The record gives the reactivity of an RNA of 177 nucleotides to 2A3 and DMS. It was measured as part of the RMDB libraries RFM100 and RFMREP. Conditions: 150 mM KOAc, 10 mM MgCl2 and 150 mM bicine (pH 8.5), 24 C. For 2A3 the reverse transcriptase was SuperScript II with manganese. DMS adducts were read by reverse transcription with MarathonRT.
RNA sequence: GGGAACGACUCGAGUAGAGUCGAAAAAAGCUUAUUUCUUGGACAACAUUACUAACAGCAAAGUGUCAUAAAACUGCGAGGCGCAGCCCUUGGCUUGUUUAACCUUUUGUCACAGCAUCUAUACCAGGUGGGUAUACAUGUUCGCAUGUAUACCCACAAAAGAAACAACAACAACAAC
Reactivity to 2A3 in 0.01 (KOAc 150mM, MgCl2 10mM, bicine 150mM(pH8.5), 24C), signal-to-noise 5, nucleotides 027 to 126: a000a000g090c100u130u050a080u060u070u030c050u030u050g040g000a020c010a100a010c010a080u070u130a060c060u110a060a070c030a020g000c040a010a080a030g020u050g030u110c040a110u130a100a050a040a040c040u080g010c020g030a080g050g020c040g000c080a050g000c020c020c000u020u030g060g000c020u060u070g040u060u050u110a050a070c010c010u050u050u020u060g050u010c010a030c010a090g040c000a020u030c020u100a050u030a120c020c030a010g060
Reactivity to DMS in 0.01 (KOAc 150mM, MgCl2 10mM, bicine 150mM(pH8.5), 24C), signal-to-noise 2, nucleotides 027 to 126: a070a030g000c050u000u010a030u000u000u000c060u050u010g020g020a050c100a030a070c120a040u010u010a020c110u010a080a050c110a050g020c060a030a060a030g000u000g010u020c100a080u010a040a010a040a130c050u000g050c010g000a030g030g030c050g010c030a050g000c050c020c020u020u000g000g010c040u000u000g000u000u010u010a070a080c080c030u000u000u000u000g010u010c040a030c080a020g030c070a020u030c040u000a090u010a150c030c030a090g010